[RMDB]
RNA sequence: GGGAACGACUCGAGUAGAGUCGAAAAGCUGCCUCUGACGUCCUUCUCCCCCGGAAACGGGGCCGAAGGGUGGUAAGGCGAGUCGCCUGGCGCUCGCACGGGUAUGCGUGGUGGUCGACCCUGGCCGCACCUCCAUAAUCUUCGGAUUAUGGAGGUGAAAAGAAACAACAACAACAAC
Reactivity to 2A3 in 0.01 (KOAc 150mM, MgCl2 10mM, bicine 150mM(pH8.5), 24C), signal-to-noise 2, nucleotides 027 to 126: g010c010u010g010c000c010u060c100u110g040a020c020g010u020c010c010u000u010c020u070c000c010c010c010c000g010g010a000a010a000c000g020g000g030g000c020c010g010a000a010g010g000g000u010g020g050u070a060a070g000g000c000g010a010g060u220c040g020c110c240u180g130g030c020g000c010u010c000g020c030a040c060g020g000g000u050a060u300g010c060g050u080g090g050u070g000g000u020c020g030a130c000c010c000u020g030g000c000c020g000
Reactivity to DMS in 0.01 (KOAc 150mM, MgCl2 10mM, bicine 150mM(pH8.5), 24C), signal-to-noise 4, nucleotides 027 to 126: g000c020u000g000c010c020u000c140u000g020a130c180g010u000c000c000u010u000c000u000c300c000c000c000c010g000g000a070a070a180c020g030g000g000g030c040c090g010a020a020g000g020g000u000g010g010u020a100a110g010g010c010g000a020g000u010c030g020c010c120u000g030g020c010g010c000u000c020g000c020a110c110g010g000g020u000a030u010g010c010g030u000g000g030u000g000g000u000c010g010a200c030c010c010u000g010g000c020c030g010